Overview
An RNA of 177 nucleotides, treated with 2A3 and DMS and read out base by base. 2A3 adducts were read by reverse transcription with SuperScript II with manganese. It was measured as part of the RMDB library OK1LIB. In probing experiments dimethyl sulfate is read out at A N1 and C N3, which are open when not base-paired. As a SHAPE reagent, 2A3 marks flexible, mostly unpaired nucleotides at the ribose 2'-OH. The reactions ran in a buffer of 150 mM KOAc, 10 mM MgCl2 and 150 mM bicine (pH 8.5), at 24 C.
RNA sequence: GGGAACGACUCGAGUAGAGUCGAAAACAAUAUGCAUGGAUGCUCGUGACAAAAUUCAUGCGUAUUAGAUUAAUGGUAGAAAGAAUUGCACUCAUGAAAAUGAGUGUAGUUCUUUGCACGAGCAUAAGGUAGGCGGAGAUUUCGAUCUUCGUCUACCAAAAGAAACAACAACAACAAC
Reactivity to 2A3 in 0.01 (KOAc 150mM, MgCl2 10mM, bicine 150mM(pH8.5), 24C), signal-to-noise 9, nucleotides 027 to 126: c020a000a010u000a000u020g000c000a000u010g020g090a020u050g010c000u000c010g040u030g130a150c090a060a190a030a050u150u090c000a010u000g000c000g000u000a010u020u050a030g050a060u110u260a130a120u230g260g050u100a080g100a040a020a000g000a000a000u000u000g000c000a000c000u000c000a000u020g090a050a060a040a020u010g000a000g000u000g000u000a000g000u000u000c000u000u000u010g000c000a000c000g000a000g000c010a020u040a080a020
Reactivity to DMS in 0.01 (KOAc 150mM, MgCl2 10mM, bicine 150mM(pH8.5), 24C), signal-to-noise 6, nucleotides 027 to 126: c040a060a020u010a010u000g000c000a010u000g000g010a040u010g010c000u000c000g020u000g000a110c110a070a040a070a080u010u020c000a000u000g000c000g010u000a000u010u010a080g010a160u040u040a090a090u030g020g000u040a070g000a040a010a010g000a010a000u000u000g000c000a000c000u000c000a000u000g000a110a060a110a020u010g000a010g010u000g010u000a000g010u000u000c000u000u000u000g000c000a010c000g000a010g010c000a060u030a100a130